[RMDB]
An RNA of 207 nucleotides, treated with 2A3 and DMS and read out base by base. For DMS, 1,419 sequencing reads were counted.

RNA sequence: GGGAACGACUCGAGUAGAGUCGAAAACAUUCAAAGAACAUUACUAGAUGACAAGAAACUGAAAAACGUGAUUCAUAAUAAGGAGAAAAGCCACCUAAAUAGAAACACAACGUCUGUUAAUUACAGAUGUUAACAGGCAAGGACUUUAAAACAACUAGAUAUUAGGCAUGUUCGCAUGCCUAAUAUCAAAAGAAACAACAACAACAAC
Reactivity to 2A3 in 0.01 (KOAc 150mM, MgCl2 10mM, bicine 150mM(pH8.5), 24C), signal-to-noise 2, nucleotides 027 to 156: c020a040u140u160c040a060a090a020g040a120a050c010a030u070u130a030c020u040a050g070a120u070g020a050c010a060a010g060a040a160a010c030u100g050a110a040a030a020a010c070g020u040g020a060u000u040c020a010u040a170a010u040a090a010g050g000a030g070a010a120a010a000g020c040c020a040c010c040u040a050a050a030u110a040g060a050a140a020c090a000c040a140a020c020g000u000c000u000g030u020u040a030a010u130u070a070c010a040g080a010u060g030u010u000a030a000c020a000g000g000c010a010a030g020g030a030c020u070u100u140a060a100a030a050c040a020a050c030u050a060
Reactivity to DMS in 0.01 (KOAc 150mM, MgCl2 10mM, bicine 150mM(pH8.5), 24C), signal-to-noise 1, nucleotides 027 to 156: c000a140u000u000c060a090a050a200g000a120a090c040a030u000u000a080c000u000a110g010a080u000g000a050c020a000a080g000a130a080a130c030u000g000a020a030a070a080a120c150g010u010g000a150u000u000c050a170u010a120a130u000a000a080g030g000a250g000a120a030a090a100g000c010c110a110c070c010u000a040a040a040u010a130g000a110a080a080c050a060c090a040a040c030g010u030c010u010g010u000u010a070a060u070u000a300c000a010g000a070u040g030u010u010a050a180c030a040g060g020c010a020a080g020g020a050c010u020u020u000a000a060a060a010c110a030a120c150u000a200
The reactions ran in a buffer of 150 mM KOAc, 10 mM MgCl2 and 150 mM bicine (pH 8.5), at 24 C. Reactivities are given for positions 27 through 156.